[RMDB]
RNA sequence: GGGAACGACUCGAGUAGAGUCGAAAACACUCACAGUGAGUCUCUCUCUGACUGACUCUGUCACAGUGUGUCAGACUGUGUCUGAGUGUCACUCUGUGUGAGACAGACACUCUCAGUGAGAGAGUGACCACCAGAAAGUCUUCGGACUUUCUGGUGGAAAAGAAACAACAACAACAAC
Reactivity to DMS in 0.01 (KOAc 150mM, MgCl2 10mM, bicine 150mM(pH8.5), 24C), signal-to-noise 2, nucleotides 027 to 126: c090a090c070u000c040a100c210a100g020u010g010a100g020u000c030u000c000u000c000u000c010u000g000a010c010u010g000a050c290u020c150u010g000u000c000a030c010a080g010u000g000u010g010u000c240a160g000a100c080u000g000u000g010u000c010u010g010a020g000u000g000u000c010a050c000u000c050u010g020u000g030u000g000a020g020a090c060a130g000a040c030a020c000u000c040u010c000a020g020u010g000a060g010a030g000a020g020u000g010a060
Reactivity to 2A3 in 0.01 (KOAc 150mM, MgCl2 10mM, bicine 150mM(pH8.5), 24C), signal-to-noise 2, nucleotides 027 to 126: c040a020c020u060c010a080c070a100g150u110g140a070g040u000c010u000c000u030c000u000c010u040g090a000c000u020g000a010c020u010c070u200g010u000c010a040c050a070g090u040g010u060g170u290c010a030g050a090c010u050g000u010g010u020c030u040g040a030g010u040g020u010c000a000c020u030c020u020g280u040g110u140g200a030g040a070c050a020g030a010c010a000c000u020c010u020c000a020g010u050g070a010g000a010g010a000g000u000g010a010